Background: The record gives the reactivity of an RNA of 177 nucleotides to 2A3 and DMS. Conditions: 150 mM KOAc, 10 mM MgCl2 and 150 mM bicine (pH 8.5), 24 C. DMS (dimethyl sulfate) methylates the pairing face of unpaired adenines and cytosines. DMS adducts were read by reverse transcription with MarathonRT. For 2A3 the reverse transcriptase was SuperScript II with manganese. Reactivities are given for positions 27 through 126. Source: RMDB libraries RFM100 and RFMREP, as collected in RNAgym.
RNA sequence: GGGAACGACUCGAGUAGAGUCGAAAAGCCGCCACCCUAGAGGCGGCAUCCCCCGCGUGACGCCCUCUGCAGGCACCGUCGUGACCGGAUUCCUUGACUCACUUUGUGUGCGCGUUGAUUGCGCACGCGGUAACUGUUUGUUCGCAAACAGUUACCGAAAAGAAACAACAACAACAAC
Reactivity to 2A3 in 0.01 (KOAc 150mM, MgCl2 10mM, bicine 150mM(pH8.5), 24C), signal-to-noise 9, nucleotides 027 to 126: g010c010c000g000c020c000a110c050c020c070u170a120g030a070g090g010c000g000g000c000a000u000c000c000c000c000c020g030c030g060u070g030a050c040g020c010c010c000u080c050u090g030c060a050g030g000c020a030c010c010g050u060c020g030u040g040a080c010c030g020g020a060u060u070c010c010u060u110g050a070c020u040c070a070c040u070u110u130g090u030g000u000g030c010g010c020g050u060u150g260a200u100u150g000c000g000c000a000c000g010
Reactivity to DMS in 0.01 (KOAc 150mM, MgCl2 10mM, bicine 150mM(pH8.5), 24C), signal-to-noise 5, nucleotides 027 to 126: g000c010c010g010c010c010a070c130c160c110u010a100g000a090g000g010c010g030g020c000a010u010c000c010c010c110c100g020c060g010u000g010a070c070g000c050c020c010u010c030u000g040c050a100g000g010c040a060c050c050g000u030c050g020u010g010a090c060c010g000g010a180u000u010c030c020u000u020g030a080c080u010c050a090c050u000u010u020g010u000g020u000g000c000g000c010g010u020u010g000a160u010u030g000c000g020c000a010c010g020